[RMDB]
RNA sequence: GGGAACGACUCGAGUAGAGUCGAAAAGAAUAUAAAGCGCGAGGGACCAAUUGCGAGCGACCUCGCGCGACCAGCUGGCGACUCACCAAGCGCGCAGCCAGCUGGAGGUUACGCUCGCAACAGAAGAGAUAGUGAGUAUGUUCGCAUACUCACUAUCAAAAGAAACAACAACAACAAC
Reactivity to 2A3 in 0.01 (KOAc 150mM, MgCl2 10mM, bicine 150mM(pH8.5), 24C), signal-to-noise 8, nucleotides 027 to 126: g010a050a020u250a010u120a120a110a010g000c010g000c000g010a010g020g010g030a040c070c060a120a290u140u100g000c000g000a000g000c000g000a020c000c000u000c000g010c000g000c000g000a000c000c000a000g000c000u000g000g000c020g060a060c030u030c100a100c040c070a120a070g060c050g000c030g000c110a010g000c000c000a000g000c000u000g000g000a020g040g000u100u060a020c020g000c000u000c000g000c000a000a000c000a010g120a120a020g080a010
Reactivity to DMS in 0.01 (KOAc 150mM, MgCl2 10mM, bicine 150mM(pH8.5), 24C), signal-to-noise 3, nucleotides 027 to 126: g000a220a100u090a030u020a050a120a200g030c000g030c000g010a000g010g000g000a160c110c060a110a110u010u010g020c000g010a000g000c000g050a030c010c000u000c000g000c010g000c000g000a030c020c000a000g020c000u000g010g010c010g010a100c130u000c070a110c170c110a060a160g010c140g000c100g040c130a260g000c000c000a020g000c010u010g020g030a010g000g000u020u010a120c020g000c020u010c000g010c020a060a130c280a090g010a070a040g000a190